[RMDB]
RNA sequence: GGGAACGACUCGAGUAGAGUCGAAAACACAGCUAAAGGUAUCGGUAUUUUGAGUGAUACGUAACAAUUCGUUCUCUUCGUUUUGAUCCAUGAUGCGAAGAAUAAUGGUGGCAUCAUUUUCAUGAGGGCAGCUAGUAUGAUUCGUCAUACUAGCUGCAAAAGAAACAACAACAACAAC
Reactivity to DMS in 0.01 (KOAc 150mM, MgCl2 10mM, bicine 150mM(pH8.5), 24C), signal-to-noise 3, nucleotides 027 to 126: c080a080c180a110g050c100u010a090a080a060g010g020u030a010u020c040g000g000u020a030u010u000u030u020g010a110g000u050g010a020u000a000c050g010u040a030a120c240a070a080u020u040c010g030u000u000c010u020c000u040u000c030g000u000u030u020u000g000a010u010c050c080a090u010g000a020u000g000c020g000a110a160g010a030a140u030a150a050u040g020g020u040g010g000c030a110u000c010a000u010u010u000u000c030a060u020g050a170g000g010
Reactivity to 2A3 in 0.01 (KOAc 150mM, MgCl2 10mM, bicine 150mM(pH8.5), 24C), signal-to-noise 5, nucleotides 027 to 126: c060a010c020a040g070c060u200a070a060a090g170g000u040a020u080c040g150g030u100a210u110u190u080u220g130a080g030u100g020a020u040a040c020g100u120a100a000c040a080a060u050u080c010g010u080u040c000u000c000u060u060c020g090u060u030u020u160g030a050u020c020c040a050u100g010a010u010g040c050g050a080a030g030a110a130u220a070a150u120g250g020u030g060g000c010a000u000c010a030u080u060u040u050c070a060u110g090a080g010g040
An RNA of 177 nucleotides, treated with DMS and 2A3 and read out base by base. 2A3 adducts were read by reverse transcription with SuperScript II with manganese. DMS adducts were read by reverse transcription with MarathonRT. For 2A3, 2,958 sequencing reads were counted. The reactions ran in a buffer of 150 mM KOAc, 10 mM MgCl2 and 150 mM bicine (pH 8.5), at 24 C.